[RMDB]
RNA sequence: GGGAACGACUCGAGUAGAGUCGAAAAUCUCUGUGAUGUCAUUCACUAAUGCUUUUACACUGGGUGACUCCUUCUAACAUCACCACAAUCUUCCAGUUCUAUGGAGAAUGCACUGAUUAGUUAUGGACAUCCGUAAGGGGUUCGCCCCUUACGGAUGAAAAGAAACAACAACAACAAC
Reactivity to DMS in 0.01 (KOAc 150mM, MgCl2 10mM, bicine 150mM(pH8.5), 24C), signal-to-noise 2, nucleotides 027 to 126: u000c020u010c030u020g020u000g030a030u000g010u010c050a060u000u010c050a050c030u000a040a080u000g000c180u000u000u020u000a070c110a060c160u010g000g010g010u000g010a040c050u000c020c070u000u030c080u000a040a060c120a080u000c000a040c200c100a160c100a050a080u000c040u010u000c010c010a040g000u010u000c220u010a100u000g000g000a070g000a070a070u000g000c080a120c140u000g020a050u000u000a060g000u020u000a080u000g000g020a300
Reactivity to 2A3 in 0.01 (KOAc 150mM, MgCl2 10mM, bicine 150mM(pH8.5), 24C), signal-to-noise 2, nucleotides 027 to 126: u030c040u000c020u090g070u060g050a100u030g020u080c010a010u040u040c010a020c040u050a110a050u150g110c110u160u130u040u100a020c150a030c050u030g020g000g020u030g030a000c020u000c000c020u060u010c000u040a060a000c020a030u030c000a020c150c000a020c020a070a140u050c040u210u060c010c000a110g030u190u110c030u100a110u040g050g000a000g020a070a040u050g020c030a000c020u000g000a100u020u100a050g050u000u010a070u150g030g020a000